An RNA of 177 nucleotides, treated with DMS and read out base by base. Conditions: 150 mM KOAc, 10 mM MgCl2 and 150 mM bicine (pH 8.5), 24 C. Values cover nucleotides 27 to 126.
[RMDB]
RNA sequence: GGGAACGACUCGAGUAGAGUCGAAAAGCCCUUUGGGUGGGGUUGCAGCCGUAGCGCAUCGCAAAGACGCCGAGGUCACCCACGCAACCCACAUCGCACGCUUGGUCACUCGGGGUCCGUGCUAGCGGUCCCACCUAAUCUUCGGAUUAGGUGGGACAAAAGAAACAACAACAACAAC
Reactivity to DMS in 0.01 (KOAc 150mM, MgCl2 10mM, bicine 150mM(pH8.5), 24C), signal-to-noise 1, nucleotides 027 to 126: g010c030c010c050u010u010u040g010g020g050u020g000g000g000g040u010u010g010c050a260g010c040c030g010u000a100g010c080g010c030a080u000c140g000c230a050a080a120g000a050c030g020c010c000g000a070g010g010u010c100a140c060c050c080a100c120g000c000a040a050c010c010c010a100c040a060u010c020g000c100a160c120g010c050u000u000g010g000u000c100a090c030u000c010g010g030g010g000u000c040c030g000u010g000c050u010a060g030c130g010